The record gives the reactivity of an RNA of 177 nucleotides to 2A3 and DMS.
Conditions: 150 mM KOAc, 10 mM MgCl2 and 150 mM bicine (pH 8.5), 24 C.
The 2A3 profile rests on 2,465 reads.
RNA sequence: GGGAACGACUCGAGUAGAGUCGAAAAGAUAUGGACCAUGAACUACCUCGAAGAAGCCGAAGAACUCGGAAACGAGGGAGGCUUUCAAGAGGCAUGGUCCUAAGUCAAACUACGCUUCGGCGUAGAACGUGGUAGAGAAGUUCGCUUCUCUACCACGAAAAGAAACAACAACAACAAC
Reactivity to 2A3 in 0.01 (KOAc 150mM, MgCl2 10mM, bicine 150mM(pH8.5), 24C), signal-to-noise 1, nucleotides 027 to 126: g020a000u060a030u110g000g020a020c010c000a000u010g020a020a050c100u180a060c250c000u020c020g060a130a120g020a010a000g110c050c010g170a240a080g000a150a040c010u010c000g000g000a070a030a000c020g000a000g000g010g030a030g020g000c000u040u080u030c030a070a010g040a010g000g000c010a010u010g010g020u030c000c010u000a000a020g000u000c020a020a020a080c010u000a010c000g010c000u030u170c300g220g000c010g000u000a000g000a000a030
Reactivity to DMS in 0.01 (KOAc 150mM, MgCl2 10mM, bicine 150mM(pH8.5), 24C), signal-to-noise 2, nucleotides 027 to 126: g000a020u000a300u020g000g020a000c000c000a050u000g000a110a060c110u010a300c000c010u000c010g050a290a300g000a010a010g010c000c030g000a090a070g000a040a250c000u000c000g010g060a050a090a120c000g000a010g010g000g000a100g030g000c010u030u010u010c010a020a300g000a000g000g000c010a000u000g000g000u010c000c000u000a050a080g010u030c020a120a090a070c010u000a000c010g000c010u000u000c130g020g000c000g000u000a020g000a050a060
It was measured as part of the RMDB library TTRDEL.